[RMDB]
This 177-nucleotide RNA was probed chemically with 2A3 and DMS. Reactivities are given for positions 27 through 126. DMS adducts were read by reverse transcription with MarathonRT. Source: RMDB library OK2TRN, as collected in RNAgym. For 2A3, 10,346 sequencing reads were counted. The reactions ran in a buffer of 150 mM KOAc, 10 mM MgCl2 and 150 mM bicine (pH 8.5), at 24 C.
RNA sequence: GGGAACGACUCGAGUAGAGUCGAAAACGCAUCGACGGCGUCGUUGGCGAACUGUCGUGCGGCGAUCGCAUCACCUCCUGCCAGGGCUAACUGCGCCAUCAGGACCUGGUGCAUGGUCACCUGGUCGGCGUGAACAUGAAUUCGUUCAUGUUCACGCAAAAGAAACAACAACAACAAC
Reactivity to 2A3 in 0.01 (KOAc 150mM, MgCl2 10mM, bicine 150mM(pH8.5), 24C), signal-to-noise 5, nucleotides 027 to 126: c040g010c020a060u140c110g030a020c020g020g030c010g020u010c030g110u070u200g030g000c040g050a230a130c040u040g010u040c010g020u040g010c020g000g000c020g040a070u090c070g000c070a030u040c020a030c020c010u020c010c010u020g000c000c030a030g020g020g000c010u010a070a030c030u050g000c000g000c000c010a080u110c060a030g070g060a010c010c010u020g010g000u020g000c040a160u220g100g000u170c020a010c030c010u020g010g000u030c030g050
Reactivity to DMS in 0.01 (KOAc 150mM, MgCl2 10mM, bicine 150mM(pH8.5), 24C), signal-to-noise 6, nucleotides 027 to 126: c020g010c060a060u010c080g010a040c030g000g000c050g020u000c100g020u000u000g000g020c030g010a070a110c020u010g010u000c020g020u000g010c080g020g000c060g020a060u000c140g010c030a300u000c050a090c030c050u000c050c010u000g000c040c030a070g000g000g000c050u000a040a070c110u010g010c040g020c010c020a050u000c090a120g010g000a040c050c030u000g000g000u000g020c030a160u010g010g000u000c040a050c010c000u000g000g010u000c080g010